Structure probing data (DMS and 2A3) for a 177-nucleotide construct. The 2A3 profile rests on 22,706 reads. Conditions: 150 mM KOAc, 10 mM MgCl2 and 150 mM bicine (pH 8.5), 24 C.
RNA sequence: GGGAACGACUCGAGUAGAGUCGAAAAGGCAUAUAUCGCCGGUGAUCUCGCCUACUACUUGGACAAACGCCAACGCGGUUUUGACUUGUGCAUCUACAUGCUCGGCGCCGACCAUCACGGCUACAUCUGUAUUAGGACAAUUCGUUGUCCUAAUACAAAAAGAAACAACAACAACAAC
Reactivity to DMS in 0.01 (KOAc 150mM, MgCl2 10mM, bicine 150mM(pH8.5), 24C), signal-to-noise 9, nucleotides 027 to 126: g010g020c030a100u010a120u010a090u000c120g020c010c030g010g020u000g000a060u000c050u000c080g010c030c010u000a100c090u000a070c080u000u000g010g010a090c080a060a080a100c100g010c020c040a050a110c220g000c050g010g000u000u000u000u000g010a070c050u000u000g010u000g010c050a040u010c100u010a080c120a060u010g010c030u000c100g000g010c060g020c040c040g000a080c040c040a070u010c070a070c070g010g010c030u000a080c140a070u010c110
Reactivity to 2A3 in 0.01 (KOAc 150mM, MgCl2 10mM, bicine 150mM(pH8.5), 24C), signal-to-noise 9, nucleotides 027 to 126: g030g000c060a020u170a000u040a040u290c100g010c010c020g000g020u040g030a060u020c040u030c040g010c010c010u050a100c010u020a020c010u050u050g040g020a060c040a050a120a020c060g000c020c020a060a030c080g010c050g070g000u040u030u050u100g040a040c020u030u070g030u050g050c010a030u020c030u120a090c030a090u080g020c010u020c040g030g000c020g010c010c010g070a090c010c010a050u060c030a010c020g020g000c020u060a030c020a100u070c060